[RMDB]
RNA sequence: GGGAACGACUCGAGUAGAGUCGAAAACAUAAAUAGUACUUUAUGUGUGACUAAAUAUUUUCAAUUUUUUCACAAAAUUUUCAAAUAAGACGGACAGUCAAACGUUGGGUACGAAUAUCUACGGCUGAUCACUUGAGAGGUUCGCCUCUCAAGUGAUAAAAGAAACAACAACAACAAC
Reactivity to 2A3 in 0.01 (KOAc 150mM, MgCl2 10mM, bicine 150mM(pH8.5), 24C), signal-to-noise 3, nucleotides 027 to 126: c030a010u130a030a070a010u120a040g060u050a020c010u000u110u130a050u070g110u030g010u000g020a000c020u070a000a030a060u090a140u080u120u040u130c060a070a000u020u010u010u020u100u100c020a020c010a030a050a100a160u080u090u140u140c080a150a090a050u220a170a010g070a010c020g040g000a030c020a000g000u010c000a100a080a000c010g030u040u010g040g000g030u030a010c020g030a130a040u030a020u060c020u020a010c060g010g010c010u020g000
Reactivity to DMS in 0.01 (KOAc 150mM, MgCl2 10mM, bicine 150mM(pH8.5), 24C), signal-to-noise 1, nucleotides 027 to 126: c040a030u010a020a030a000u000a170g000u060a090c050u020u000u000a000u000g040u000g010u000g030a000c000u000a060a060a040u040a070u070u060u030u100c190a040a050u000u000u050u080u000u020c000a000c000a060a130a010a080u000u000u030u010c020a060a100a050u010a030a210g000a000c040g000g030a000c050a040g010u000c020a040a070a050c140g000u000u000g030g020g000u010a020c060g040a010a040u030a050u010c040u020a020c070g020g010c080u010g020
Source information
This 177-nucleotide RNA was probed chemically with 2A3 and DMS. Values cover nucleotides 27 to 126. The 2A3 profile rests on 1,025 reads. The RNA was probed in 150 mM KOAc, 10 mM MgCl2 and 150 mM bicine (pH 8.5) at 24 C. For DMS the reverse transcriptase was MarathonRT.